Chemical mapping of a 177-nucleotide RNA with DMS and 2A3. The data come from the RNA Mapping Database (RMDB), library OK1LIB. For DMS the reverse transcriptase was MarathonRT. The reactions ran in a buffer of 150 mM KOAc, 10 mM MgCl2 and 150 mM bicine (pH 8.5), at 24 C. For 2A3 the reverse transcriptase was SuperScript II with manganese. For 2A3, 11,099 sequencing reads were counted.
[RMDB]
RNA sequence: GGGAACGACUCGAGUAGAGUCGAAAAUUGAGGUUUAUGCGUUGCUAAGGCUGGACUGCUCUUCGUCUUCGGGAGCCUGAGCGUAAGCCUCGAGCUUGCAAGGCCCGAAGAUCGGCAAGUUAGCUAAGCCUUGGGGGAGAUUCGUCUCUUUCGAGGUAAAAGAAACAACAACAACAAC
Reactivity to DMS in 0.01 (KOAc 150mM, MgCl2 10mM, bicine 150mM(pH8.5), 24C), signal-to-noise 6, nucleotides 027 to 126: u020u030g010a060g000g000u000u010u020a050u030g010c120g010u010u010g020c050u010a070a090g000g000c010u010g010g020a060c050u000g000c020u010c120u010u020c240g000u000c000u000u000c000g000g000g000a110g020c000c010u000g000a140g020c140g000u020a030a020g000c000c010u030c270g000a100g010c010u000u000g010c010a170a030g000g000c000c000c010g010a010a010g000a010u010c170g000g000c050a030a060g010u010u010a070g000c020u000a070a160
Reactivity to 2A3 in 0.01 (KOAc 150mM, MgCl2 10mM, bicine 150mM(pH8.5), 24C), signal-to-noise 5, nucleotides 027 to 126: u030u070g020a030g030g050u040u060u050a070u110g050c040g010u020u040g010c030u060a060a030g040g000c000u020g010g040a040c010u010g000c010u010c010u120u090c020g000u000c000u010u000c000g000g010g010a040g110c000c000u020g020a030g030c030g050u100a000a010g000c000c000u030c080g000a050g000c000u000u000g000c000a010a010g000g000c000c000c000g000a010a000g000a020u010c010g010g000c010a000a050g010u020u030a010g000c000u020a030a040